[RMDB]
RNA sequence: GGGAACGACUCGAGUAGAGUCGAAAAAGUCUGAUAAGUCGGAUGAAACAUCUUCAUGCUACCGCACGUUCUUCCCAAAUCAGACACCAAUUGGGUGCAGUGAAGACGACAUCCCCAAGCUUUGUUAGCUCGUAAUAGCAUUCGUGCUAUUACGAGCAAAAGAAACAACAACAACAAC
Reactivity to DMS in 0.01 (KOAc 150mM, MgCl2 10mM, bicine 150mM(pH8.5), 24C), signal-to-noise 2, nucleotides 027 to 126: a120g000u000c000u000g000a050u000a170a160g000u020c110g000g000a090u000g000a090a080a120c150a090u010c020u000u000c040a060u020g000c110u020a060c130c070g000c050a120c130g030u000u000c150u000u000c000c000c000a120a080a040u000c010a020g020a040c000a140c120c110a050a140u020u000g000g000g020u030g010c030a080g050u000g010a040a060g000a060c110g000a140c050a080u000c010c000c150c180a070a110g020c100u000u000u000g000u000u010a150
Reactivity to 2A3 in 0.01 (KOAc 150mM, MgCl2 10mM, bicine 150mM(pH8.5), 24C), signal-to-noise 2, nucleotides 027 to 126: a030g000u000c010u010g010a030u060a180a020g200u230c090g020g060a020u030g070a080a120a010c060a050u040c000u070u000c010a010u050g000c010u130a070c000c040g140c080a050c070g090u090u080c000u040u030c030c000c000a030a080a010u010c000a000g010a000c010a010c010c040a060a120u190u240g160g010g010u030g020c030a050g170u030g110a020a010g000a010c020g010a020c000a020u000c000c010c000c010a010a030g050c040u100u120u140g160u130u140a020

The data come from the RNA Mapping Database (RMDB), library OK2TST. This 177-nucleotide RNA was probed chemically with DMS and 2A3. DMS adducts were read by reverse transcription with MarathonRT. The reactions ran in a buffer of 150 mM KOAc, 10 mM MgCl2 and 150 mM bicine (pH 8.5), at 24 C. For 2A3, 1,746 sequencing reads were counted.